[RMDB]
RNA sequence: GGGAACGACUCGAGUAGAGUCGAAAAGUGCGGAUUGAAAUUCAUGGGAGCCUCUCCAUAAUGGAUGAACGCCGCGUUAGUCCGCGCAGUCGCGACGUAAACGCUCUGUUUUCCCGUUCAGGCCUCAAUUUUAAAUACGUUUCGACGUAUUUAAAAUAAAAGAAACAACAACAACAAC
Reactivity to DMS in 0.01 (KOAc 150mM, MgCl2 10mM, bicine 150mM(pH8.5), 24C), signal-to-noise 9, nucleotides 027 to 126: g020u000g010c010g010g000a100u000u000g010a120a140a060u000u000c060a040u010g000g000g010a070g020c160c100u010c100u000c010c010a080u000a090a050u010g000g000a030u000g010a100a080c100g010c030c020g020c020g010u000u000a110g000u010c020c050g010c060g010c080a100g000u000c090g020c030g010a030c030g010u010a060a090a090c060g010c020u000c030u000g000u000u000u000u000c010c000c010g010u010u010c140a080g010g010c050c090u000c120a060
Reactivity to 2A3 in 0.01 (KOAc 150mM, MgCl2 10mM, bicine 150mM(pH8.5), 24C), signal-to-noise 6, nucleotides 027 to 126: g050u050g000c010g000g050a090u080u130g060a150a130a070u090u070c040a050u080g020g000g050a050g050c060c040u140c010u000c050c010a060u240a300a070u150g020g000a010u040g030a070a040c040g010c050c010g020c020g010u010u030a030g030u010c040c030g000c020g000c040a020g060u160c050g020c030g050a020c020g040u060a060a110a040c020g000c010u030c000u040g030u030u050u020u040c000c000c000g000u130u080c070a050g070g040c040c000u060c040a020